[RMDB]
Structure probing data (2A3 and DMS) for a 177-nucleotide construct. Values cover nucleotides 27 to 126. The data come from the RNA Mapping Database (RMDB), library M2PK50. The 2A3 profile rests on 4,478 reads.
RNA sequence: GGGAACGACUCGAGUAGAGUCGAAAAGUACAAUGUUUCGACAUUGUACGAUGGAGCCAAACCCGAAAGGCAUUUUAAUCCUUGGCUGGCGAAAGCCUAAAAGAAGAAUCCAUUUCGAUGGAUUCAAACAAUCGUUAAGGUUCGCCUUAACGAUUGUAAAAGAAACAACAACAACAAC
Reactivity to 2A3 in 0.01 (KOAc 150mM, MgCl2 10mM, bicine 150mM(pH8.5), 24C), signal-to-noise 3, nucleotides 027 to 126: g010u000a000c000a010a000u000g000u030u080u110c130g030a020c000a000u000u020g000u000a010c000g000a030u080g090g080a010g000c020c010a050a060a060c000c010c020g050a070a020a020g010g050c020a030u000u090u090u290a070a080u070c000c000u000u050g030g000c050u040g020g000c050g050a080a050a000g020c000c020u040a040a060a000a040g160a080a030g000a000a000u000c010c000a000u020u060u100c170g080a000u000g000g000a000u020u000c000a000a010
Reactivity to DMS in 0.01 (KOAc 150mM, MgCl2 10mM, bicine 150mM(pH8.5), 24C), signal-to-noise 4, nucleotides 027 to 126: g000u000a000c010a010a010u000g010u000u000u010c180g040a040c000a000u000u000g000u010a010c000g010a110u010g050g000a120g010c010c020a090a090a140c030c000c030g020a120a050a070g010g020c300a140u000u000u000u000a140a170u010c010c010u000u000g010g010c040u000g000g010c040g000a100a070a110g010c010c010u000a040a040a060a090g020a120a140g000a000a000u000c000c000a010u000u000u010c160g020a010u010g010g000a010u000u000c000a040a090